[RMDB]
RNA sequence: GGGAACGACUCGAGUAGAGUCGAAAAGAUAUGGAUCUUGUAUACUUCUUUGAUCUCGGAAACGAGGGAGAAGGUACUGAGAUCCUAAGUCAAAACUACGUGACCGUCUUCGGACGGUCACGUAGAACCUAUGGUCCUAGUUCGCUAGGACCAUAGGAAAAGAAACAACAACAACAAC
Reactivity to DMS in 0.01 (KOAc 150mM, MgCl2 10mM, bicine 150mM(pH8.5), 24C), signal-to-noise 2, nucleotides 027 to 126: g000a050u000a300u000g000g010a000u000c000u010u010g030u010a020u000a080c000u000u010c000u000u020u010g000a090u000c000u010c000g000g000a100a110a230c000g010a020g010g000g000a020g000a010a030g000g000u000a000c010u030g030a020g010a000u000c000c000u010a030a070g000u000c040a070a090a100a170c000u000a000c000g020u000g000a010c000c000g000u000c000u000u010c190g000g030a010c000g010g000u000c010a000c000g010u000a000g000a040a160
Reactivity to 2A3 in 0.01 (KOAc 150mM, MgCl2 10mM, bicine 150mM(pH8.5), 24C), signal-to-noise 2, nucleotides 027 to 126: g050a030u090a060u210g000g000a000u000c000u010u020g060u020a020u060a300c030u030u010c010u170u280u070g140a130u080c000u020c000g010g050a120a060a040c010g000a010g020g000g000a030g010a000a000g020g010u010a010c060u090g030a010g000a010u000c010c010u010a170a020g040u040c040a010a010a130a180c000u000a010c010g010u000g000a000c000c000g040u000c010u100u170c300g040g000a000c000g010g000u020c000a000c000g000u010a020g000a010a000

Structure probing data (DMS and 2A3) for a 177-nucleotide construct. For DMS, 2,237 sequencing reads were counted. The reactions ran in a buffer of 150 mM KOAc, 10 mM MgCl2 and 150 mM bicine (pH 8.5), at 24 C. It was measured as part of the RMDB library TTRDEL.